An RNA of 177 nucleotides, treated with 2A3 and DMS and read out base by base.
[RMDB]
RNA sequence: GGGAACGACUCGAGUAGAGUCGAAAACUGUUUUUGAGGAUUUUGAACAUGUUUUGCAAAGCACUUCAGGUUUUACUUUUUAUCGUGAGCCAUGAGCUUUUUAGAAAAAUCAUUGAGGGUUGCGAGAGAUACUCCAGGGAUUCGUCCCUGGAGUAUCAAAAGAAACAACAACAACAAC
Reactivity to 2A3 in 0.01 (KOAc 150mM, MgCl2 10mM, bicine 150mM(pH8.5), 24C), signal-to-noise 2, nucleotides 027 to 126: c040u000g100u000u020u010u060u070g180a040g050g080a040u140u000u000u130g000a110a070c040a090u110g030u070u050u150u150g060c080a060a040a010g040c020a040c050u020u000c030a000g040g100u080u110u000u050a040c030u070u110u050u300u150a030u080c030g070u120g130a000g020c030c020a130u210g010a020g050c020u040u110u000u000u100a100g040a160a050a000a100a000u110c060a080u030u150g070a130g010g150g020u090u000g000c070g000a060g000a000
Reactivity to DMS in 0.01 (KOAc 150mM, MgCl2 10mM, bicine 150mM(pH8.5), 24C), signal-to-noise 2, nucleotides 027 to 126: c040u000g000u000u020u000u000u030g000a070g000g000a070u010u010u010u000g030a060a080c180a100u070g020u000u020u000u000g030c150a080a110a080g020c030a070c120u000u020c110a120g000g000u010u020u010u020a020c050u000u020u060u010u020a030u040c150g000u000g000a050g000c020c000a150u030g000a090g010c090u000u010u000u010u040a110g000a040a040a030a030a020u000c000a150u000u000g020a110g000g020g020u000u000g000c000g010a070g030a160
For DMS the reverse transcriptase was MarathonRT.
The RNA was probed in 150 mM KOAc, 10 mM MgCl2 and 150 mM bicine (pH 8.5) at 24 C.